[RMDB]
RNA sequence: GGGAACGACUCGAGUAGAGUCGAAAACCGUCCAUCCCUUCCCCCAGGAGGGUCGCCCAGGAAUGGCGGGACCCCACUUCAACAGGGUCCGCGUUCCAUCCUUUCUUACCUGAUGGCCGGCAUGGUCGUGACUACUAUUCUUCGGAAUAGUAGUCACAAAAGAAACAACAACAACAAC
Reactivity to DMS in 0.01 (KOAc 150mM, MgCl2 10mM, bicine 150mM(pH8.5), 24C), signal-to-noise 2, nucleotides 027 to 126: c050c000g000u020c020c000a100u000c040c010c010u000u010c020c010c010c030c050a170g000g010a160g010g010g010u000c080g000c040c050c100a090g040g010a050a030u000g000g000c060g010g020g010a030c010c000c000c110a140c150u000u000c210a060a100c250a070g000g000g010u000c000c020g000c030g010u000u000c010c010a100u010c040c010u010u000u020c070u020u000a110c060c080u020g030a080u010g000g040c020c000g030g010c080a040u010g000g000u010c150
Reactivity to 2A3 in 0.01 (KOAc 150mM, MgCl2 10mM, bicine 150mM(pH8.5), 24C), signal-to-noise 1, nucleotides 027 to 126: c000c000g050u110c000c000a170u080c000c010c000u070u130c020c030c000c000c010a010g030g000a020g000g000g000u070c040g040c000c000c000a000g040g020a070a040u030g300g300c060g010g010g070a060c010c000c000c000a080c060u210u180c040a080a100c010a070g040g000g000u000c000c020g010c000g040u020u030c000c000a030u020c000c000u080u170u030c080u070u110a210c000c000u140g010a080u100g020g020c010c010g010g050c060a090u090g020g000u090c030